[RMDB]
RNA sequence: GGGAACGACUCGAGUAGAGUCGAAAAGAUAAGGAGUGCGUGAGGAAUCGACCAGAAUACAGAGAUUCCAAGCACUCUGUAUCACGCCGUCACGUGCCGAAAUUCUGGUCAAAUUCGGAAUAACAAACGUAAGUAGUACCUUCGGGUACUACUUACGAAAAGAAACAACAACAACAAC
Reactivity to 2A3 in 0.01 (KOAc 150mM, MgCl2 10mM, bicine 150mM(pH8.5), 24C), signal-to-noise 6, nucleotides 027 to 126: g080a020u090a050a110g040g010a010g010u020g010c080g040u200g160a220g070g000a010a010u010c020g030a040c000c010a040g040a090a040u210a150c050a050g100a010g000a050u020u000c000c000a010a000g000c010a000c000u000c000u000g000u000a000u020c030a020c090g080c040c000g130u160c040a040c100g050u090g130c020c010g010a060a040a010u090u000c000u030g010g010u010c020a000a050a030u050u020c030g000g050a060a090u110a150a060c110a110a050a010
Reactivity to DMS in 0.01 (KOAc 150mM, MgCl2 10mM, bicine 150mM(pH8.5), 24C), signal-to-noise 4, nucleotides 027 to 126: g010a050u010a070a110g000g010a000g040u010g000c010g030u040g000a190g000g010a020a000u010c020g000a040c100c030a040g000a220a130u030a100c220a090g010a110g000a010u000u010c000c020a090a140g020c020a020c000u000c000u010g000u020a030u020c010a090c100g020c000c040g000u070c130a040c140g000u000g000c000c020g000a030a040a160u000u010c010u000g000g000u000c030a090a070a160u000u010c020g000g020a080a120u020a050a070c180a090a070a150